[RMDB]
The record gives the reactivity of an RNA of 207 nucleotides to 2A3. 2A3 is a SHAPE reagent: it acylates the 2'-hydroxyl of flexible nucleotides of all four kinds. The RNA was probed in 150 mM KOAc, 10 mM MgCl2 and 150 mM bicine (pH 8.5) at 24 C.
RNA sequence: GGGAACGACUCGAGUAGAGUCGAAAACGCAAAGCUGCAGCGCGGCGCUCUGGAGGCCUUGCCCCGCGCACUUCUCUUUACAUGGCCCGACGUGAGGGCACUUCGCGGGCAGUGCUGCGGCCUCGUGAAACUGCCCCUAAGUUCGCUUAGGGGCAAAUCUGGUAAUUUACUUCGGUAAAUUACCAGAAAAAGAAACAACAACAACAAC
Reactivity to 2A3 in 0.01 (KOAc 150mM, MgCl2 10mM, bicine 150mM(pH8.5), 24C), signal-to-noise 2, nucleotides 027 to 156: c030g000c010a010a040a030g000c000u010g000c000a010g020c030g000c000g130g110c090g060c020u020c030u070g100g020a010g040g030c040c090u060u110g000c000c000c000c000g040c000g050c020a030c040u210u100c040u010c020u080u180u140a130c110a210u170g050g040c040c070c020g100a140c040g010u020g020a290g010g000g000c000a040c000u030u020c020g010c030g060g000g000c000a000g010u010g000c000u010g000c000g010g010c000c000u000c010g030u020g030a090a060a040c050u040g000c000c000c000c000u010a010a030g010u020u110c150g070c150u000u000a000g000g000g000g010c020a000a000a000